[RMDB]
RNA sequence: GGGAACGACUCGAGUAGAGUCGAAAAGUGAUCCUACUCACAUUACUAACAUUAUCAAAGAGUGGUUAAAUUUAUCUGUCAAUGUGGAACGUAUAUCAGUGAAUGACUAGGAGGAUUUUUAAUGAAAGUCAACAGGAAAAUUCGUUUUCCUGUUGACAAAAGAAACAACAACAACAAC
Reactivity to DMS in 0.01 (KOAc 150mM, MgCl2 10mM, bicine 150mM(pH8.5), 24C), signal-to-noise 5, nucleotides 027 to 126: g030u000g020a060u000c020c010u000a050c110u000c020a060c050a070u000u000a060c050u000a080a100c060a050u000u020a060u000c090a100a100a130g000a060g010u000g010g000u010u010a040a100a120u010u020u000a040u020c080u010g010u000c090a040a060u000g010u010g010g010a080a070c140g020u010a040u010a060u010c080a050g010u000g000a070a060u000g010a040c090u000a050g000g010a050g010g000a030u000u000u010u010u020a050a120u000g010a090a100a110
Reactivity to 2A3 in 0.01 (KOAc 150mM, MgCl2 10mM, bicine 150mM(pH8.5), 24C), signal-to-noise 4, nucleotides 027 to 126: g040u030g040a050u040c000c010u000a030c020u030c020a010c000a050u030u120a060c040u050a130a030c000a060u070u130a130u230c080a100a070a060g080a030g050u060g060g060u060u080a060a070a130u190u120u090a080u030c030u040g090u060c030a040a020u060g010u020g090g000a080a030c060g050u060a060u010a020u180c060a020g040u020g090a100a100u040g010a010c020u030a030g050g010a010g030g000a020u080u070u010u060u210a120a160u190g050a060a030a000
This 177-nucleotide RNA was probed chemically with DMS and 2A3. Reactivities are rounded to 0.1 and cut off at 0 and 3. It was measured as part of the RMDB library OK2TRN. The DMS profile rests on 4,341 reads. Conditions: 150 mM KOAc, 10 mM MgCl2 and 150 mM bicine (pH 8.5), 24 C. The 2A3 profile rests on 3,055 reads.